This 207-nucleotide RNA was probed chemically with 2A3. It was measured as part of the RMDB library M2RFPK. Values are in units of 0.01, from 0 to 300, in steps of 10.

RNA sequence: GGGAACGACUCGAGUAGAGUCGAAAAGUAGAAUCUGUCAAGCAAGACCCCAAAACCUUACACUGAGAGCAUUUAGCCUGAUUACUCUUUAAAUCAAAUCAGGCAAUAGAGAGAAACUCGAGAGGUGAAACGGGAGUAAUGUUCGCAUUACUCCCAACGGGAUUAAUACGUUCGCGUAUUAAUCCCGAAAAGAAACAACAACAACAAC
Reactivity to 2A3 in 0.01 (KOAc 150mM, MgCl2 10mM, bicine 150mM(pH8.5), 24C), signal-to-noise 1, nucleotides 027 to 156: g050u080a040g020a070a050u040c050u080g040u050c010a090a000g020c030a030a080g030a080c000c000c000c000a000a040a020a210c030c120u120u160a060c120a030c060u190g070a040g000a000g060c050a050u000u080u000a050g030c020c000u000g010a030u000u110a050c000u070c010u130u300u130a090a120a080u130c070a010a050a000u000c000a000g000g000c010a000a000u000a000g000a000g020a000g000a000a070a070c020u020c010g010a050g000a020g000g080u030g070a130a110a010c090g000g000g000a020g000u000a000a000u000g000u000u070c120g000c030a000u000u000a000c000u060c030c000c000a000a000